An RNA of 207 nucleotides, treated with 2A3 and read out base by base.
2A3 adducts were read by reverse transcription with SuperScript II with manganese.
The RNA was probed in 150 mM KOAc, 10 mM MgCl2 and 150 mM bicine (pH 8.5) at 24 C.

[RMDB]
RNA sequence: GGGAACGACUCGAGUAGAGUCGAAAAAGCCGAGGACUACGGUCCUCGGCAACAACCGUCACAAGGGCUUCCUGGCGUGACGGGGUUAACCCCAACGGAGCAAGUGCGAGCUUACGAGCUCGCACAAUUUAGGAGAAUUCCUUCGGGAAUUCUCCAACUGUAAGUAAGAGUUCGCUCUUACUUACAGAAAAGAAACAACAACAACAAC
Reactivity to 2A3 in 0.01 (KOAc 150mM, MgCl2 10mM, bicine 150mM(pH8.5), 24C), signal-to-noise 1, nucleotides 027 to 156: a000g000c000c000g030a000g000g010a010c020u030a030c300g080g000u010c000c000u020c030g000g090c000a000a010c000a010a000c000c000g000u000c000a010c010a010a030g100g040g020c030u290u200c010c010u100g070g010c020g000u000g000a000c000g000g000g000g000u070u170a060a060c000c000c000c000a040a090c100g010g020a020g030c020a220a100g060u030g000c030g010a010g000c010u070u040a040c210g050a030g000c000u000c000g090c000a000c000a000a000u030u040u160a050g000g000a010g010a000a000u010u000c010c000u060u040c190g110g000g010a000a000u010u000c000u020c000c010a000a000